[RMDB]
RNA sequence: GGGAACGACUCGAGUAGAGUCGAAAACGUGGGAUGCUCCUCCCGAUUCCGAUAUCCCUUCCCCCGAGAGGUCCCCCAGGAAUGGCGGGACCCCACUCUACAGGGUCCGCGUUCCAUCCUUUCUUACGACCAGUGAGGUUCGCCUCACUGAAAAGAAACAACAACAACAAC
Reactivity to 2A3 in 0.01 (KOAc 150mM, MgCl2 10mM, bicine 150mM(pH8.5), 24C), signal-to-noise 9, nucleotides 027 to 129: c070g040u130g010g010g000a030u090g020c030u030c020c010u020c010c010c000g020a050u120u050c040c030g060a050u020a090u130c010c000c000u020u030c020c010c000c000c010g050a050g000a000g040g020u020c010c010c000c010c010a000g030g070a090a060u060g190g120c080g020g020g000a010c000c000c000c000a030c010u080c020u070a030c030a050g000g000g000u000c010c010g080c010g020u040u000c010c010a050u040c020c020u040u090u060c020u050u090a090c070g050a070c050
Reactivity to DMS in 0.01 (KOAc 150mM, MgCl2 10mM, bicine 150mM(pH8.5), 24C), signal-to-noise 9, nucleotides 027 to 129: c130g050u020g040g020g000a080u020g030c100u040c060c030u010c030c030c020g020a050u050u030c050c000g000a100u030a070u040c030c010c020u000u000c000c000c000c010c010g030a060g010a080g000g000u000c010c000c000c000c040a050g010g080a020a020u000g010g030c060g030g030g020a040c010c010c000c010a030c110u040c090u030a070c120a090g010g020g040u000c030c040g040c020g000u040u040c000c000a060u040c000c030u020u020u010c040u000u020a120c160g000a020c190

Chemical mapping of a 170-nucleotide RNA with 2A3 and DMS. The data come from the RNA Mapping Database (RMDB), library 15KLIB. The RNA was probed in 150 mM KOAc, 10 mM MgCl2 and 150 mM bicine (pH 8.5) at 24 C. DMS adducts were read by reverse transcription with MarathonRT. For 2A3, 45,695 sequencing reads were counted.